Source: RMDB library M2PK50, as collected in RNAgym. An RNA of 177 nucleotides, treated with DMS and 2A3 and read out base by base. For 2A3, 2,498 sequencing reads were counted. The RNA was probed in 150 mM KOAc, 10 mM MgCl2 and 150 mM bicine (pH 8.5) at 24 C. 2A3 adducts were read by reverse transcription with SuperScript II with manganese.
RNA sequence: GGGAACGACUCGAGUAGAGUCGAAAAGUCGCCUCCUUCGGGAGGCGACAAAUACAGAGACUACGCAACUCUGAAAAACACAACAAAAGUGUUAAAGCGUAGAAACAUCCACGUUCGCGUGGAUGAAUCCAUCAUUUUACUUCGGUAAAAUGAUGGAAAAAGAAACAACAACAACAAC
Reactivity to DMS in 0.01 (KOAc 150mM, MgCl2 10mM, bicine 150mM(pH8.5), 24C), signal-to-noise 3, nucleotides 027 to 126: g020u010c000g020c000c000u020c000c000u000u010c230g080g010g000a020g010g010c010g010a000c000a000a050a040u020a300c040a010g000a020g000a120c010u000a010c000g000c000a140a020c000u010c000u000g000a070a100a130a050a020c010a000c010a050a100c160a120a100a190a110g010u000g000u000u000a060a050a190g010c000g030u010a000g010a240a110a290c000a000u000c000c000a000c000g020u020u030c150g030c010g050u000g000g020a010u000g000a080a100
Reactivity to 2A3 in 0.01 (KOAc 150mM, MgCl2 10mM, bicine 150mM(pH8.5), 24C), signal-to-noise 2, nucleotides 027 to 126: g010u000c010g020c000c020u000c030c050u020u080c120g080g000g010a000g000g000c000g010a000c000a000a000a000u040a000c000a000g020a010g050a030c020u010a010c030g000c020a110a070c010u000c020u040g030a100a000a000a000a000c070a040c050a270a000c090a070a170a080a050g010u030g020u050u080a050a020a000g030c000g010u010a000g020a000a040a000c000a000u000c010c000a020c010g040u070u050c210g010c000g040u000g000g000a000u000g000a000a060